[RMDB]
RNA sequence: GGGAACGACUCGAGUAGAGUCGAAAAGAAAGGCAGCAAGUGCAGCCCACGCAGAGGCAUGCUUUUGCAUGCCCAGUCGAGCCCACGACUCAGGGCAGCUGCGCCACUGAGGGCAGCUGCCGAAAGACAGGUGGAUAUAGUUCGCUAUAUCCACCUGAAAAGAAACAACAACAACAAC
Reactivity to DMS in 0.01 (KOAc 150mM, MgCl2 10mM, bicine 150mM(pH8.5), 24C), signal-to-noise 4, nucleotides 027 to 126: g000a090a100a130g010g010c000a040g020c030a140a130g000u010g000c030a070g000c010c010c030a130c180g010c140a110g020a100g020g000c010a020u000g010c000u000u000u010u000g010c010a020u000g000c000c000c020a020g000u020c010g010a100g010c000c020c010a300c050g000a040c020u010c130a120g010g020g010c010a040g000c000u000g010c000g010c020c010a180c250u000g000a140g000g000g000c010a020g000c010u000g000c010c000g010a020a050a060g000a230
Reactivity to 2A3 in 0.01 (KOAc 150mM, MgCl2 10mM, bicine 150mM(pH8.5), 24C), signal-to-noise 4, nucleotides 027 to 126: g080a010a060a000g040g020c010a010g000c020a150a160g090u110g180c010a030g030c020c020c010a040c050g120c050a030g070a190g150g000c040a050u030g000c020u180u300u140u270g030c030a070u000g000c010c000c000a000g020u010c020g000a010g000c020c010c000a030c020g040a010c000u040c110a060g050g130g000c010a000g000c000u020g000c030g060c010c010a140c210u230g120a220g020g020g000c000a000g000c000u000g000c010c000g010a010a000a000g070a030